RNA sequence: GGGAACGACUCGAGUAGAGUCGAAAAGCGUGAGCGGCGUGUACCUGAAGCGGACAUCUUGCCAAACGAAAUGCUGACCGAGAUACCCUGAAGUAGCUUGCUAAUAGUGGCGAUGUCCUCCUGAGACUAUUAUUAAAUCUUUCGAGAUUUAAUAAUAAAAAGAAACAACAACAACAAC
Reactivity to 2A3 in 0.01 (KOAc 150mM, MgCl2 10mM, bicine 150mM(pH8.5), 24C), signal-to-noise 9, nucleotides 027 to 126: g040c030g020u050g040a050g030c020g030g000c010g010u060g020u070a120c010c010u050g050a070a010g050c040g010g010a010c000a030u030c020u100u190g030c020c000a090a090a040c070g070a070a040a020u120g000c020u040g050a070c000c030g010a020g010a060u170a110c020c010c000u040g030a050a010g010u040a010g030c020u050u120g010c030u080a080a060u070a270g080u030g030g000c010g020a030u030g030u030c010c010u040c000c020u070g030a050g020a050c030
Reactivity to DMS in 0.01 (KOAc 150mM, MgCl2 10mM, bicine 150mM(pH8.5), 24C), signal-to-noise 9, nucleotides 027 to 126: g010c070g030u010g000a050g020c040g010g000c030g020u000g010u010a050c050c030u010g000a110a090g010c250g010g000a040c040a020u010c020u020u020g030c020c020a050a110a120c130g000a080a070a060u020g010c020u000g000a060c050c020g010a120g010a120u020a080c030c020c030u010g000a140a110g010u010a060g000c020u000u010g010c080u010a080a100u020a110g010u000g000g000c010g010a040u010g000u000c010c010u010c040c030u010g000a120g010a120c130
Structure probing data (2A3 and DMS) for a 177-nucleotide construct. As a SHAPE reagent, 2A3 marks flexible, mostly unpaired nucleotides at the ribose 2'-OH. 2A3 adducts were read by reverse transcription with SuperScript II with manganese. The data come from the RNA Mapping Database (RMDB), libraries RFM100 and RFMREP. The RNA was probed in 150 mM KOAc, 10 mM MgCl2 and 150 mM bicine (pH 8.5) at 24 C. Reactivities are given for positions 27 through 126.